This 207-nucleotide RNA was probed chemically with 2A3 and DMS. For 2A3 the reverse transcriptase was SuperScript II with manganese. Conditions: 150 mM KOAc, 10 mM MgCl2 and 150 mM bicine (pH 8.5), 24 C. It was measured as part of the RMDB library OK3TST. For 2A3, 1,874 sequencing reads were counted. For DMS the reverse transcriptase was MarathonRT.

RNA sequence: GGGAACGACUCGAGUAGAGUCGAAAACGGUUAACGAUACAACGGAACUAACGUCCUCCGGGGAAAUCGGUAAUUCAUCAAUGACCGACUCCACUUGUGACAAUAAAACUUGGCCGACAUCAGUAUCGGAUUGCGGAUAUACAUAAUCCGAUGACAGAACCAUCAGAUGGUUCGCCAUCUGAUGGUUAAAAGAAACAACAACAACAAC
Reactivity to 2A3 in 0.01 (KOAc 150mM, MgCl2 10mM, bicine 150mM(pH8.5), 24C), signal-to-noise 3, nucleotides 027 to 156: c020g000g030u060u030a060a020c030g020a050u050a140c050a090a020c040g000g020a040a070c040u140a120a060c060g050u040c010c010u000c030c010g040g000g000g010a000a110a070u000c010g020g000u040a050a090u140u110c050a090u060c040a150a120u120g080a050c000c010g010a000c000u010c000c020a100c050u070u090g040u090g070a030c030a010a060u130a100a110a050a040c070u030u070g050g000c000c000g070a070c020a080u160c040a030g000u070a020u010c000g000g020a030u010u130g010c050g040g010a060u080a010u040a190c060a040u170a050a010u050c000c010g000a020u070g050a010c010a080g100
Reactivity to DMS in 0.01 (KOAc 150mM, MgCl2 10mM, bicine 150mM(pH8.5), 24C), signal-to-noise 2, nucleotides 027 to 156: c030g040g050u000u020a130a080c030g020a080u010a100c030a140a130c010g000g020a160a150c030u000a060a140c160g000u010c040c040u000c020c040g000g030g040g000a040a040a020u000c010g000g020u000a030a040u000u000c170a150u000c100a040a100u000g010a100c020c020g000a020c010u000c000c020a110c000u010u000g030u010g020a050c090a030a110u000a090a110a080a100c090u000u000g030g000c010c000g000a120c060a050u000c060a140g010u000a100u010c030g000g000a040u000u000g050c010g030g000a190u000a110u000a150c080a070u000a030a010u000c000c000g000a040u000g010a030c080a090g010